Structure probing data (2A3 and DMS) for a 207-nucleotide construct. For 2A3, 1,347 sequencing reads were counted. The DMS profile rests on 2,514 reads. 2A3 adducts were read by reverse transcription with SuperScript II with manganese. DMS adducts were read by reverse transcription with MarathonRT. Conditions: 150 mM KOAc, 10 mM MgCl2 and 150 mM bicine (pH 8.5), 24 C.
RNA sequence: GGGAACGACUCGAGUAGAGUCGAAAAUCAUCCAUGCUUUUUUGAUCCACUUAUAGAACACAGGCAGAGUAGAUUUAGCAUAAUUCUUAAGGGCCCUAGGAUUUUCAGAAUGGCAAAUGAGCAUUGGCUUCAACUUCAAGUUACCAGCAGCAUUAAACUGGUCAACUAUAUUCGUAUAGUUGACCAGAAAAGAAACAACAACAACAAC
Reactivity to 2A3 in 0.01 (KOAc 150mM, MgCl2 10mM, bicine 150mM(pH8.5), 24C), signal-to-noise 2, nucleotides 027 to 156: u040c010a050u020c020c000a020u010g030c010u060u070u020u040u060u140g040a050u080c030c000a060c040u090u090a060u040a170g060a100a020c060a010c030a050g000g040c020a020g020a000g140u110a020g020a080u050u070u120a020g010c020a020u060a120a090u180u090c030u040u080a060a070g050g000g010c000c000c020u030a070g060g050a080u040u010u030u120c070a040g020a090a070u020g030g000c000a040a000a100u050g010a030g000c030a030u020u120g030g000c040u100u050c080a090a050c010u070u080c050a090a030g040u050u090a080c030c010a010g060c020a000g020c000a060u070u050a100a070a000
Reactivity to DMS in 0.01 (KOAc 150mM, MgCl2 10mM, bicine 150mM(pH8.5), 24C), signal-to-noise 2, nucleotides 027 to 156: u010c040a130u010c030c040a100u010g000c010u010u010u000u010u000u010g020a140u010c030c010a100c050u000u000a210u000a060g000a110a110c060a040c070a040g020g060c010a150g020a130g040u000a050g010a100u000u010u000a150g010c030a100u000a090a080u000u000c080u000u020a070a190g010g000g010c020c020c080u000a050g030g010a060u000u000u000u000c090a090g010a070a070u000g000g000c050a030a060a070u000g000a060g000c050a100u000u000g000g000c030u000u000c020a030a030c050u000u000c010a030a090g030u010u000a040c050c000a050g060c080a070g050c030a080u000u000a070a120a300